[RMDB]
An RNA of 207 nucleotides, treated with DMS and 2A3 and read out base by base.
For 2A3, 3,713 sequencing reads were counted.
It was measured as part of the RMDB library M2RFPK.
Conditions: 150 mM KOAc, 10 mM MgCl2 and 150 mM bicine (pH 8.5), 24 C.
The DMS profile rests on 7,325 reads.
For DMS the reverse transcriptase was MarathonRT.

RNA sequence: GGGAACGACUCGAGUAGAGUCGAAAAGGGUGAUGUCUCCUAACCUUUAUCAAUGGGGGCACUCGGUCGUGCUGUGGGUAGAAAUUUUAUUCCGUGCCUACCUUAGACGCUUGUCGUCGGGAGUAUGUGGGACUGAUGAACUUCGGUUCAUCAGUAACUUUAGAGUUAACUUCGGUUAACUCUAAAGAAAAGAAACAACAACAACAAC
Reactivity to DMS in 0.01 (KOAc 150mM, MgCl2 10mM, bicine 150mM(pH8.5), 24C), signal-to-noise 2, nucleotides 027 to 156: g000g010g010u000g000a080u000g000u000c000u000c020c020u000a130a100c050c040u000u000u010a130u010c090a080a100u010g020g060g010g040g030c010a060c000u010c040g020g020u000c050g030u000g000c020u010g020u000g010g040g020u000a100g000a040a050a120u000u000u000u000a130u020u020c020c020g010u010g010c030c020u000a050c020c060u000u000a110g020a040c020g030c040u000u010g010u000c000g030u000c010g000g000g010a100g010u000a040u000g070u010g030g000g010a060c000u000g000a020u000g000a000a000c010u000u010c300g060g010u000u000c000a000u000c000a000g010u000a000a160
Reactivity to 2A3 in 0.01 (KOAc 150mM, MgCl2 10mM, bicine 150mM(pH8.5), 24C), signal-to-noise 6, nucleotides 027 to 156: g050g000g010u050g020a070u040g040u030c020u010c030c000u040a090a140c020c020u100u190u150a210u170c090a070a120u180g000g000g000g000g000c000a010c020u030c030g040g000u000c020g020u030g050c040u070g020u100g030g000g020u070a060g120a050a140a070u120u170u130u120a090u190u080c040c030g040u040g010c010c010u040a080c000c000u030u030a040g000a020c000g010c040u170u300g110u290c020g000u010c000g010g030g010a050g020u070a070u160g030u110g020g020g030a010c010u000g000a000u010g000a000a000c000u020u020c150g100g000u000u000c010a000u000c000a000g000u000a010a000